[RMDB]
RNA sequence: GGGAACGACUCGAGUAGAGUCGAAAAGAUAUGGAAAUAUGAGCUAUGAAGUACGAGAAAUCCAGGGUAUACUCGGAAACGAGUAUACCCUGGACACUGUUGUAUGGAGCUCUAAGUUUCCUAAGUCGGUAUAUAGCCAGUUCGCUGGCUAUAUACCAAAAGAAACAACAACAACAAC
Reactivity to DMS in 0.01 (KOAc 150mM, MgCl2 10mM, bicine 150mM(pH8.5), 24C), signal-to-noise 1, nucleotides 027 to 126: g000a110u020a300u000g000g000a010a010a030u000a300u000g000a000g000c000u010a280u010g000a150a300g000u000a000c010g000a080g000a130a210a270u020c000c000a010g000g000g000u000a010u000a020c000u000c010g000g010a080a100a210c000g010a080g060u000a000u000a000c000c000c000u000g010g020a000c040a000c090u000g010u010u000g000u000a010u000g000g020a010g020c000u000c000u000a020a160g020u000u010u000c000c000u010a030a090g000u000c110